[RMDB]
RNA sequence: GGGAACGACUCGAGUAGAGUCGAAAAUAGAGAUCAGAGCUGCUGACCUACAGCCUCAGUUGAGAUUUCUUAAGAGUUGCAAACUUUACAUUUGGUUUCUAAGGCAAUGGCCUUGUGAACAUAUACUGCAGUCCUGCUGAGGAGCGGUCACCUCCACAGCUAUUCUAUCGUUCGCGAUAGAAUAGCUAAAAGAAACAACAACAACAAC
Reactivity to DMS in 0.01 (KOAc 150mM, MgCl2 10mM, bicine 150mM(pH8.5), 24C), signal-to-noise 1, nucleotides 027 to 156: u010a050g040a090g000a090u010c040a090g000a140g070c020u010g000c000u030g020a170c010c000u010a090c100a210g000c040c020u010c020a060g010u000u000g000a180g020a100u000u010u010c100u010u010a080a180g020a100g020u000u020g000c050a100a120a100c050u020u010u000a110c110a180u010u000u010g030g020u000u010u000c030u030a000a040g010g030c020a170a120u010g060g010c000c000u000u000g010u000g000a040a090c050a050u010a090u000a080c060u020g030c000a110g020u000c000c010u000g010c020u000g000a100g010g000a130g050c110g000g010u000c040a000c030c010u000c000c060a060c300
Reactivity to 2A3 in 0.01 (KOAc 150mM, MgCl2 10mM, bicine 150mM(pH8.5), 24C), signal-to-noise 3, nucleotides 027 to 156: u170a020g110a000g040a110u140c120a070g010a040g060c150u140g030c050u020g090a030c000c030u060a060c080a080g050c010c010u010c020a010g000u020u130g090a200g010a180u100u190u020c070u190u180a160a090g030a040g050u030u150g080c060a180a150a080c010u150u120u130a100c100a190u080u070u080g100g010u000u130u000c020u010a000a010g020g030c060a200a300u250g240g030c000c010u020u030g060u020g040a000a000c010a000u050a040u030a060c070u000g030c040a000g010u000c000c010u000g000c020u010g010a030g000g020a010g100c030g000g010u010c010a000c020c000u030c000c020a060c020
This 207-nucleotide RNA was probed chemically with DMS and 2A3. For 2A3, 1,163 sequencing reads were counted. It was measured as part of the RMDB library OK3TST. The RNA was probed in 150 mM KOAc, 10 mM MgCl2 and 150 mM bicine (pH 8.5) at 24 C.